[RMDB]
RNA sequence: GGGAACGACUCGAGUAGAGUCGAAAAGAAAAGCCCGCAAAUACAGGCUUAGUUGAGGGCAUCAGAAGAAGCCAUUGACUUGUCAGGCGUUUUUCUGAUCUCCAGAUUUCAUGUUGCGGACAGUUCCAACCCAAACAACGUUCGCGUUGUUUGGGUUAAAAGAAACAACAACAACAAC
Reactivity to 2A3 in 0.01 (KOAc 150mM, MgCl2 10mM, bicine 150mM(pH8.5), 24C), signal-to-noise 2, nucleotides 027 to 126: g080a020a090a020a000g050c000c000c000g000c000a020a030a000u120a010c090a030g110g040c040u180u100a010g050u210u150g070a280g020g040g050c120a000u000c000a000g030a020a000g030a010a000g000c000c010a130u090u160g030a070c070u150u180g070u110c020a030g000g020c100g180u000u000u000u000u000c010u000g000a010u000c000u030c000c000a040g020a150u100u020u040c100a050u170g030u060u030g010c000g000g000a000c020a030g020u060u030c000c010
Reactivity to DMS in 0.01 (KOAc 150mM, MgCl2 10mM, bicine 150mM(pH8.5), 24C), signal-to-noise 1, nucleotides 027 to 126: g000a090a020a210a250g000c010c000c010g020c070a020a020a070u000a250c110a060g000g020c040u000u010a050g010u000u000g000a230g000g000g000c260a010u010c000a000g000a040a000g010a000a110g000c000c040a030u060u010g000a020c070u020u060g030u000c020a080g070g000c020g040u000u000u000u000u010c000u020g000a010u000c000u000c000c000a090g000a110u040u000u000c130a050u000g000u000u000g000c020g000g000a010c000a140g030u000u050c040c010
Structure probing data (2A3 and DMS) for a 177-nucleotide construct. DMS (dimethyl sulfate) methylates the pairing face of unpaired adenines and cytosines. The reactions ran in a buffer of 150 mM KOAc, 10 mM MgCl2 and 150 mM bicine (pH 8.5), at 24 C.